[RMDB]
RNA sequence: GGGAACGACUCGAGUAGAGUCGAAAAUCUGUCAUGCUAUGUGGUGAUAAUUCUGCUAAGUUUUGGGAAGAGGCAUUCUAUAGAGAUCUCUAUAGUUCGCCUACCACUUUGCAGGCUGUCGGUUCAUAAACCAACCCGUUCGCGGGUUGGAAAAGAAACAACAACAACAAC
Reactivity to 2A3 in 0.01 (KOAc 150mM, MgCl2 10mM, bicine 150mM(pH8.5), 24C), signal-to-noise 3, nucleotides 027 to 129: u050c010u030g150u030c030a040u110g100c010u120a030u080g080u000g050g030u050g040a040u070a080a080u100u040c030u010g060c000u010a000a070g030u040u080u230u130g050g000g020a160a120g100a040g120g000c010a030u010u000c010u000a030u000a010g040a050g030a170u060c090u010c000u210a000u000a000g000u000u010c050g000c020c000u020a010c000c000a020c000u000u000u000g000c030a010g000g000c020u040g070u070c010g020g000u040u110c010a010u110a030a080a080
Reactivity to DMS in 0.01 (KOAc 150mM, MgCl2 10mM, bicine 150mM(pH8.5), 24C), signal-to-noise 4, nucleotides 027 to 129: u030c030u030g020u020c100a040u010g050c070u020a030u020g070u010g000g020u060g000a050u070a050a060u080u020c020u020g030c060u010a170a080g020u010u000u040u130g000g000g000a130a040g030a080g020g070c000a040u000u000c000u000a040u030a020g020a060g070a190u050c090u030c060u020a030u030a000g030u000u000c060g020c000c020u040a060c050c000a090c020u020u000u000g020c080a030g050g000c230u040g000u030c070g010g100u090u040c080a050u070a110a090a210